RNA sequence: GGGAACGACUCGAGUAGAGUCGAAAAGCGAGGAAAUAAACUUGCGUGGAAGCCUGUUCUAGAGCUUGCUUCCAUGCGCAGGUGUCGUUUGAUGGAAAACAUCAAUUGACAUAGAACGGGCGAAGAAGGGUUUUGUAUACUUCGGUAUACAAAACCCAAAAGAAACAACAACAACAAC
Reactivity to DMS in 0.01 (KOAc 150mM, MgCl2 10mM, bicine 150mM(pH8.5), 24C), signal-to-noise 1, nucleotides 027 to 126: g080c030g000a020g010g000a030a230a100u000a090a110a080c010u000u010g000c010g130u000g000g000a150a110g000c000c000u000g000u000u000c080u000a070g000a080g060c000u000u000g000c060u000u080c090c030a070u030g000c040g010c040a030g000g000u000g020u000c000g000u000u000u000g070a050u030g000g040a110a050a040a160c030a000u000c010a000a000u000u010g000a000c000a290u020a050g000a000a050c050g080g000g000c110g010a180a040g000a180a140
Reactivity to 2A3 in 0.01 (KOAc 150mM, MgCl2 10mM, bicine 150mM(pH8.5), 24C), signal-to-noise 2, nucleotides 027 to 126: g010c020g000a010g050g050a160a200a000u170a110a090a050c000u010u010g000c010g020u080g110g070a120a030g000c000c000u020g000u010u000c030u030a040g020a050g220c020u000u050g000c000u180u030c040c010a060u180g040c030g000c030a010g000g070u040g000u020c020g010u000u000u030g000a000u000g000g130a030a110a110a090c010a000u000c000a000a000u000u080g000a000c010a020u020a010g000a010a010c010g000g000g020c020g010a030a020g070a060a070
An RNA of 177 nucleotides, treated with DMS and 2A3 and read out base by base. For 2A3, 1,397 sequencing reads were counted. For DMS the reverse transcriptase was MarathonRT. Conditions: 150 mM KOAc, 10 mM MgCl2 and 150 mM bicine (pH 8.5), 24 C. It was measured as part of the RMDB library OK1LIB.